RNA sequence: GGGAACGACUCGAGUAGAGUCGAAAAUAAGCCAGCGGGCAGAGGAAAACGCCUAUAGCCGGCGAGUGAAGACGAACCAUCGGCUGCCGUGUUCUUUUUCCUCUUGGAGGUUGGAGUCCCCUGGGCGUAUCGCGCUAGGAUUCGUCCUAGCGCGAUAAAAAGAAACAACAACAACAAC
Reactivity to 2A3 in 0.01 (KOAc 150mM, MgCl2 10mM, bicine 150mM(pH8.5), 24C), signal-to-noise 2, nucleotides 027 to 126: u180a020a010g060c000c000a000g000c010g090g100g000c010a000g000a000g010g080a000a040a000a020c040g050c000c030u110a080u150a070g010c020c000g000g000c000g020a060g010u130g050a100a160g040a070c110g020a020a070c010c000a040u070c010g050g020c060u030g020c020c020g040u030g040u080u060c030u000u130u010u000u000c000c000u000c000u060u050g170g040a120g110g000u060u080g050g000a020g080u100c030c000c000c000u100g000g010g100c060g030
Reactivity to DMS in 0.01 (KOAc 150mM, MgCl2 10mM, bicine 150mM(pH8.5), 24C), signal-to-noise 3, nucleotides 027 to 126: u040a090a180g000c040c000a030g000c130g010g010g000c110a020g000a020g000g020a000a010a030a050c120g000c150c030u000a100u010a030g020c110c040g000g000c020g000a080g020u020g000a110a070g030a130c110g010a130a080c080c060a150u010c120g000g000c040u010g010c120c300g010u040g020u000u000c070u000u000u000u000u000c030c000u000c020u010u000g010g000a140g000g000u010u000g010g030a150g020u010c010c010c030c080u020g010g020g000c070g020
The record gives the reactivity of an RNA of 177 nucleotides to 2A3 and DMS. Conditions: 150 mM KOAc, 10 mM MgCl2 and 150 mM bicine (pH 8.5), 24 C. The 2A3 profile rests on 818 reads. For DMS, 3,336 sequencing reads were counted. For 2A3 the reverse transcriptase was SuperScript II with manganese.